[RMDB]
RNA sequence: GGGAACGACUCGAGUAGAGUCGAAAAACGCCGGAGGGCUACCGGGUGAUGCAGUCGAUAACGGUGCGCAGCUACCCAACGAUGGUGAUGAUCAGCCUUCGAGCAAAUCGCAUGAUGAUCGUCGGACGUGCAAGGCAAGAUUCGUCUUGCCUUGCACAAAAGAAACAACAACAACAAC
Reactivity to 2A3 in 0.01 (KOAc 150mM, MgCl2 10mM, bicine 150mM(pH8.5), 24C), signal-to-noise 2, nucleotides 027 to 126: a000c020g010c050c000g060g030a130g020g040g080c030u070a010c020c040g050g020g000u030g010a090u080g050c030a060g060u080c000g030a070u060a290a120c060g020g030u040g030c090g000c020a020g000c030u080a080c000c000c000a100a010c090g010a060u150g070g060u090g030a040u030g010a000u040c010a010g000c060c030u020u060c020g050a050g000c100a040a120a150u090c030g010c080a010u060g030a050u000g000a010u030c020g030u010c010g020g020a020c030
Reactivity to DMS in 0.01 (KOAc 150mM, MgCl2 10mM, bicine 150mM(pH8.5), 24C), signal-to-noise 2, nucleotides 027 to 126: a080c060g030c000c020g000g050a190g000g010g020c050u010a030c060c050g040g000g010u000g000a080u010g000c080a220g010u000c060g000a100u020a100a100c150g010g030u000g010c090g030c100a070g000c100u000a100c010c010c010a130a130c110g020a190u000g000g000u000g010a050u000g010a080u000c030a050g000c010c050u000u000c040g000a120g000c140a030a050a080u000c050g020c130a060u000g030a050u000g010a030u000c010g000u000c030g020g000a170c160